[RMDB]
RNA sequence: GGGAACGACUCGAGUAGAGUCGAAAAAAGUUGCACCAGGUACGGAUACCAGACGUAGCCAAACAGGGUGACAUGAGGAUCACCCAUGUACUGUCCCUUGGCAGCCGUACCUGGUGCUGGUGAAAAAGCAACAAAUUGUGUUCGCACAAUUUGUUGCAAAAGAAACAACAACAACAAC
Reactivity to DMS in 0.01 (KOAc 150mM, MgCl2 10mM, bicine 150mM(pH8.5), 24C), signal-to-noise 2, nucleotides 027 to 126: a050a060g010u010u020g000c020a010c000c000a000g000g000u000a010c010g000g000a070u010a080c040c050a100g000a050c080g030u000a090g000c080c100a050a100a070c060a050g000g000g020u010g010a010c010a160u020g020a210g040g010a200u010c010a000c010c000c000a040u000g010u000a070c070u010g000u000c020c120c090u000u010g000g020c070a200g030c020c010g000u000a000c000c000u000g010g000u000g000c000u000g010g020u010g000a030a070a060a070a060
Reactivity to 2A3 in 0.01 (KOAc 150mM, MgCl2 10mM, bicine 150mM(pH8.5), 24C), signal-to-noise 1, nucleotides 027 to 126: a000a010g220u150u020g030c000a010c010c000a010g000g000u000a000c010g010g010a030u010a040c010c000a030g080a040c000g070u080a040g120c130c100a000a110a080c030a070g010g000g000u000g000a010c050a080u300g140a080g110g090a030u020c000a040c010c000c010a010u030g010u010a050c070u090g040u040c000c010c000u000u000g000g000c010a000g010c010c010g030u010a000c000c010u020g000g010u000g000c000u000g000g000u010g030a100a030a010a000a000